The record gives the reactivity of an RNA of 207 nucleotides to DMS and 2A3.
2A3 adducts were read by reverse transcription with SuperScript II with manganese.
For DMS the reverse transcriptase was MarathonRT.
The RNA was probed in 150 mM KOAc, 10 mM MgCl2 and 150 mM bicine (pH 8.5) at 24 C.

[RMDB]
RNA sequence: GGGAACGACUCGAGUAGAGUCGAAAAACUAAGUGGGUUUUUAUUUGAGAAGUAUCUCUUUCUCUCCACUGUCGUGAACCUAGCUAAGAAUUUUAUCAUCUUUCACUUGAGAGUUUUCCAUAACCUCUUAAUUGGUCUGUUUAAUCUCAUCCACCUAGCUAAUAAUGCUGUUCGCAGCAUUAUUAGCAAAAGAAACAACAACAACAAC
Reactivity to DMS in 0.01 (KOAc 150mM, MgCl2 10mM, bicine 150mM(pH8.5), 24C), signal-to-noise 1, nucleotides 027 to 156: a160c040u000a050a040g010u000g000g010g040u000u000u010u000u000a060u050u040u000g010a030g000a050a130g050u010a080u000c070u000c020u000u000u000c020u010c010u000c010c020a020c030u000g010u000c070g050u000g010a060a120c000c040u000a100g030c070u010a070a090g010a130a120u000u000u020u000a090u000c060a110u000c010u000u000u000c060a110c100u000u000g030a030g010a170g030u000u010u010u020c070c070a170u000a100a100c110c000u010c030u020u000a060a130u000u000g000g020u010c080u010g010u000u000u000a090a250u010c010u020c020a110u000c050c010a090c060c010u000a270
Reactivity to 2A3 in 0.01 (KOAc 150mM, MgCl2 10mM, bicine 150mM(pH8.5), 24C), signal-to-noise 2, nucleotides 027 to 156: a010c040u090a060a000g010u040g000g040g040u060u120u230u120u300a200u120u280u140g020a010g000a050a000g040u120a220u100c080u000c000u060u070u010c010u000c000u000c040c000a030c020u010g050u040c020g010u010g040a010a010c020c000u000a050g040c020u040a080a040g020a130a210u130u140u130u150a130u160c030a040u030c040u000u110u090c010a050c060u020u030g020a000g010a020g020u030u000u070u170c030c000a050u070a160a170c020c020u060c000u070u180a100a050u170u080g000g000u000c040u020g100u030u090u040a110a120u050c050u020c040a050u030c050c080a000c060c010u020a010